This 207-nucleotide RNA was probed chemically with 2A3 and DMS. For DMS, 4,715 sequencing reads were counted. For DMS the reverse transcriptase was MarathonRT. Reactivities are rounded to 0.1 and cut off at 0 and 3. Values cover nucleotides 27 to 156. Conditions: 150 mM KOAc, 10 mM MgCl2 and 150 mM bicine (pH 8.5), 24 C. The 2A3 profile rests on 3,340 reads. The data come from the RNA Mapping Database (RMDB), library OK3TST. For 2A3 the reverse transcriptase was SuperScript II with manganese.

RNA sequence: GGGAACGACUCGAGUAGAGUCGAAAAUGUUUAGAAAUGUGCUAGACAGUGGCAAUUACAUUGCUGCAAGAUAAGUAAAAAAAUCAGCUGACUAAGCUUUAUAAGAGGAGGAAUCAUGUCUCUUUUAUUUACCGUUGGAUAGUCACUACAUGGCACAACUCAUUAGUAAUUUCGAUUACUAAUGAGUAAAAGAAACAACAACAACAAC
Reactivity to 2A3 in 0.01 (KOAc 150mM, MgCl2 10mM, bicine 150mM(pH8.5), 24C), signal-to-noise 5, nucleotides 027 to 156: u060g010u010u080u050a080g020a040a150a050u060g010u010g000c010u010a020g030a110c040a040g020u010g000g020c020a030a040u080u060a120c030a120u080u150g010c040u020g010c030a020a030g010a130u110a080a060g060u130a080a100a030a020a020a000a070u110c070a020g010c020u030g060a120c040u060a110a020g040c000u080u150u100a140u050a080a050g010a020g100g030a030g020g060a100a090u150c050a060u140g110u000c000u000c000u040u060u030u010a140u030u070u070a070c060c040g030u030u010g040g020a030u050a060g000u000c010a000c000u030a030c020a080u050g000g020c000a000c000a020
Reactivity to DMS in 0.01 (KOAc 150mM, MgCl2 10mM, bicine 150mM(pH8.5), 24C), signal-to-noise 3, nucleotides 027 to 156: u000g020u010u000u000a120g010a060a070a090u000g040u010g020c030u010a060g020a170c210a100g000u000g000g010c020a090a120u000u020a160c050a300u000u010g010c050u000g000c030a050a120g030a050u000a020a050g010u000a000a000a020a070a070a070a060u000c090a100g000c030u020g010a080c060u000a060a150g010c020u000u000u000a060u010a110a150g020a080g000g000a110g000g010a130a050u000c050a070u010g000u000c080u010c020u000u000u000u000a030u000u020u000a040c010c040g020u000u000g000g000a100u000a110g010u000c020a050c030u000a070c050a250u000g010g000c020a030c010a070